[RMDB]
RNA sequence: GGGAACGACUCGAGUAGAGUCGAAAACAACUUGGCAAAGGUGAUAGCCUCUGUGAGCUGCCUGACACAUUGUUUUCAACAGGUAGACUCUAUAACUUGGAACAUGAUUCGGCCAAGAAUUUUAAUGUGCAACAGUUAGGCAUUGAAACAAUACCUGUCCUUUAAACCAUUUCGAUGGUUUAAAGGAAAAAGAAACAACAACAACAAC
Reactivity to 2A3 in 0.01 (KOAc 150mM, MgCl2 10mM, bicine 150mM(pH8.5), 24C), signal-to-noise 3, nucleotides 027 to 156: c030a000a040c020u010u060g040g000c030a070a090a090g000g010u070g060a110u130a060g020c020c010u020c040u030g050u010g000a000g010c000u010g010c030c020u020g050a010c030a010c010a170u120u130g120u160u200u220u180c030a080a060c000a020g000g020u020a060g040a210c010u000c010u010a080u010a190a060c030u050u080g010g020a080a010c000a020u070g030a140u120u100c040g050g000c010c000a010a000g010a020a010u000u000u060u100a080a020u050g030u030g090c070a130a070c060a230g090u200u170a020g060g000c020a030u010u160g020a070a100a030c030a060a020u070a050c030c000u060g080
Reactivity to DMS in 0.01 (KOAc 150mM, MgCl2 10mM, bicine 150mM(pH8.5), 24C), signal-to-noise 2, nucleotides 027 to 156: c020a060a110c020u020u020g050g030c010a030a060a030g000g040u000g000a250u000a160g010c020c000u000c000u000g020u020g030a030g000c020u010g020c000c030u010g000a200c090a070c170a110u000u000g020u010u000u000u000c030a100a110c060a090g010g010u010a070g010a110c050u000c020u000a110u000a020a090c070u010u010g010g020a130a190c040a090u000g020a210u000u000c050g030g030c020c050a030a060g000a060a090u000u000u020u000a040a070u000g040u000g020c020a080a120c030a090g020u000u010a060g020g010c000a060u000u000g010a090a060a040c030a050a190u000a060c030c010u020g000
Structure probing data (2A3 and DMS) for a 207-nucleotide construct. For 2A3 the reverse transcriptase was SuperScript II with manganese. For 2A3, 1,589 sequencing reads were counted. The reactions ran in a buffer of 150 mM KOAc, 10 mM MgCl2 and 150 mM bicine (pH 8.5), at 24 C. It was measured as part of the RMDB library OK3TST. The DMS profile rests on 3,753 reads.